[RMDB]
RNA sequence: GGGAACGACUCGAGUAGAGUCGAAAAUACAAUAGGGUAGGGAACCAAGCUAAGAGGUUGGAAGUCCAACGGUAGAGGGCUUGGUUCGCAGCUGCUCUAGAAGAGGUCCCACUCCCUACGCCGCAAAGUUAGACAAAAAGUUCGCUUUUUGUCUAACAAAAGAAACAACAACAACAAC
Reactivity to 2A3 in 0.01 (KOAc 150mM, MgCl2 10mM, bicine 150mM(pH8.5), 24C), signal-to-noise 4, nucleotides 027 to 126: u140a010c030a030a070u020a040g020g000g020u010a010g070g000g010a010a000c010c000a010a000g000c010u070a090a030g060a070g240g090u030u000g030g040a290a140g130u140c010c000a010a010c000g070g080u140a080g040a100g190g000g000c000u010u000g000g000u000u000c000g000c000a020g060c000u020g010c000u010c000u020a010g030a110a020g030a030g040g030u010c010c000c010a030c010u010c000c000c010u030a040c050g060c060c000g060c060a010a040a040
Reactivity to DMS in 0.01 (KOAc 150mM, MgCl2 10mM, bicine 150mM(pH8.5), 24C), signal-to-noise 6, nucleotides 027 to 126: u000a080c100a080a160u000a020g000g000g020u000a020g010g000g010a020a020c010c010a010a010g010c010u000a100a100g010a160g010g010u000u000g010g010a300a170g020u010c010c000a000a020c020g020g020u000a120g010a130g010g000g010c000u000u000g010g010u000u000c010g010c120a100g000c020u000g010c000u000c000u000a010g010a130a090g000a070g000g020u000c020c010c010a280c080u000c020c010c010u000a070c110g010c040c050g010c180a070a070a100
Conditions: 150 mM KOAc, 10 mM MgCl2 and 150 mM bicine (pH 8.5), 24 C. The record gives the reactivity of an RNA of 177 nucleotides to 2A3 and DMS. For 2A3 the reverse transcriptase was SuperScript II with manganese. For DMS the reverse transcriptase was MarathonRT.